[RMDB]
RNA sequence: GGGAACGACUCGAGUAGAGUCGAAAAGGCAACAUUCCGAGGGGACCGUCCCUCGGUAAUGGCGAAUGGGACCCAGAACUCUCUCUAGAUUCCCAGAGUGAAUCGAGAGAAAACUGGCUCUCCCUUAAACGUUUUGAGUUCGCUCAAAACAAAAGAAACAACAACAACAAC
Reactivity to DMS in 0.01 (KOAc 150mM, MgCl2 10mM, bicine 150mM(pH8.5), 24C), signal-to-noise 9, nucleotides 027 to 129: g000g030c030a050a080c010a000u010u000c010c000g000a000g020g020g030g000a140c250c300g040u090c020c000c010u000c000g000g000u000a000a000u030g000g000c120g000a080a030u000g000g000g000a000c190c000c010a040g020a110a220c170u020c040u000c010u000c010u040a130g000a000u010u030c000c040c140a120g020a150g030u060g000a020a000u010c030g020a000g000a030g030a000a020a060a130c030u000g020g000c020u020c050u000c000c000c040u010u030a060a080a080c150
Reactivity to 2A3 in 0.01 (KOAc 150mM, MgCl2 10mM, bicine 150mM(pH8.5), 24C), signal-to-noise 9, nucleotides 027 to 129: g090g000c040a050a020c010a120u020u010c000c000g000a000g000g010g020g050a150c050c060g300u300c030c010c000u000c000g010g000u000a000a000u000g010g000c020g040a050a040u080g000g000g010a010c020c000c000a020g010a040a040c010u000c000u000c000u000c020u090a070g000a010u010u020c000c020c100a090g050a030g110u300g020a010a000u010c010g000a000g000a000g000a010a020a000a010c010u000g010g010c010u000c010u000c010c000c000u020u070a070a070a010c050